The record gives the reactivity of an RNA of 177 nucleotides to 2A3 and DMS.

[RMDB]
RNA sequence: GGGAACGACUCGAGUAGAGUCGAAAAGAAGGUCGAGUGCACGACCAGAGAGUGCGGUGAGAGACCGACAAAGAGUUCGAAUCGGAACGAACUGCCGCAAACGAUCGACUGAAGAUCGAAGUGAGAAAUACUCGAGUGAGUUCGCUCACUCGAGUAUAAAAGAAACAACAACAACAAC
Reactivity to 2A3 in 0.01 (KOAc 150mM, MgCl2 10mM, bicine 150mM(pH8.5), 24C), signal-to-noise 2, nucleotides 027 to 126: g040a070a060g000g000u060c040g020a100g100u200g040c160a040c130g040a040c000c020a000g060a000g000a040g060u190g040c000g000g010u020g010a090g000a020g000a010c000c000g010a000c000a000a140a050g230a000g070u040u170c030g040a020a070u080c090g010g160a050a050c000g050a020a000c000u000g060c020c000g010c020a070a030a050c000g000a000u030c000g110a090c120u140g070a030a080g000a070u000c000g000a080a050g010u090g030a050g060a000a130
Reactivity to DMS in 0.01 (KOAc 150mM, MgCl2 10mM, bicine 150mM(pH8.5), 24C), signal-to-noise 3, nucleotides 027 to 126: g000a190a090g000g000u000c030g020a200g030u020g050c210a130c000g000a020c020c020a120g010a120g000a140g020u010g000c030g000g020u000g000a090g000a200g000a110c020c000g010a010c130a120a180a070g050a050g000u010u000c020g010a080a200u000c090g000g000a080a070c020g000a020a030c020u010g000c010c020g010c050a060a030a180c020g000a030u000c000g000a110c190u060g010a110a240g050a000u010c000g020a100a140g000u030g020a140g010a120a060
Source: RMDB library OK1LIB, as collected in RNAgym. Conditions: 150 mM KOAc, 10 mM MgCl2 and 150 mM bicine (pH 8.5), 24 C. For 2A3, 1,472 sequencing reads were counted.